[RMDB]
RNA sequence: GGGAACGACUCGAGUAGAGUCGAAAAACUGGGCUAAAUAAGCGCACAUUAAGGAGGAAAACAAAUUGAAAAAAACAGAAAGUGAAAAACCACUUGUCAUCAAAAUUGUUAUCAGCGUUCUCGUAGGUCGAUCUAUAUGUUUCGACAUAUAGAUCGAAAAAGAAACAACAACAACAAC
Reactivity to 2A3 in 0.01 (KOAc 150mM, MgCl2 10mM, bicine 150mM(pH8.5), 24C), signal-to-noise 7, nucleotides 027 to 126: a000c040u040g010g020g000c020u060a050a050a120u160a230a050g010c040g050c030a020c020a070u080u080a100a030g060g040a030g020g040a030a080a060a030c040a040a080a020u030u090g050a080a050a050a030a020a050a000c090a040g110a040a070a000g020u030g070a140a070a060a070a020c040c000a000c000u040u070g090u050c010a030u010c010a020a050a120a140u060u040g020u030u030a070u110c050a000g040c010g030u020u000c020u000c020g050u050a040g020g150
Reactivity to DMS in 0.01 (KOAc 150mM, MgCl2 10mM, bicine 150mM(pH8.5), 24C), signal-to-noise 8, nucleotides 027 to 126: a120c110u000g000g010g010c020u000a050a090a080u030a120a060g020c050g010c010a060c080a070u030u020a080a080g010g010a060g000g000a050a080a050a040c040a030a040a120u020u020g000a000a010a070a090a090a100a070c140a080g000a060a030a030g010u000g000a050a090a080a110a110c220c010a010c010u010u000g000u010c050a060u010c060a030a040a050a080u010u000g010u000u000a040u000c070a060g020c020g000u000u000c020u000c020g020u030a060g010g000

An RNA of 177 nucleotides, treated with 2A3 and DMS and read out base by base.
Conditions: 150 mM KOAc, 10 mM MgCl2 and 150 mM bicine (pH 8.5), 24 C.
For 2A3 the reverse transcriptase was SuperScript II with manganese.